The record gives the reactivity of an RNA of 177 nucleotides to DMS and 2A3. 2A3 adducts were read by reverse transcription with SuperScript II with manganese. The reactions ran in a buffer of 150 mM KOAc, 10 mM MgCl2 and 150 mM bicine (pH 8.5), at 24 C.

RNA sequence: GGGAACGACUCGAGUAGAGUCGAAAAUGAGACACCUUCGGGUGUCUCACAUUAAGCUGACCAGCUAUGAGGUCAAUAUCGUGAUGCACAAAUAGAAUAAAACAGCUUGCUCCUUCGGGAGCAAGAAACAAGCUUAAUAAUUCGUUAUUAAGCUUGUAAAAGAAACAACAACAACAAC
Reactivity to DMS in 0.01 (KOAc 150mM, MgCl2 10mM, bicine 150mM(pH8.5), 24C), signal-to-noise 5, nucleotides 027 to 126: u010g000a010g010a010c000a000c010c000u000u010c190g040g010g030u000g000u010c000u000c000a010c080a060u010u010a090a110g020c090u000g000a080c030c010a160g020c060u000a080u000g010a110g010g010u000c030a060a070u010a050u010c130g010u010g020a060u000g010c080a050c110a070a050a070u000a080g000a090a130u010a060a060a070a090c140a090g010c000u000u000g000c000u000c000c000u000u010c210g040g000g000a000g000c000a000a000g000a040a060
Reactivity to 2A3 in 0.01 (KOAc 150mM, MgCl2 10mM, bicine 150mM(pH8.5), 24C), signal-to-noise 4, nucleotides 027 to 126: u060g000a010g000a010c000a000c010c000u030u030c200g020g000g010u000g010u000c000u000c000a000c010a000u040u030a060a000g030c030u010g010a020c000c010a010g050c050u110a120u250g110a070g030g010u020c030a030a050u140a080u090c120g040u060g080a060u120g070c070a020c030a090a100a040u130a100g130a110a080u150a160a120a030a020c020a010g030c000u000u000g000c000u010c010c000u040u050c140g080g000g020a000g000c000a010a000g000a000a000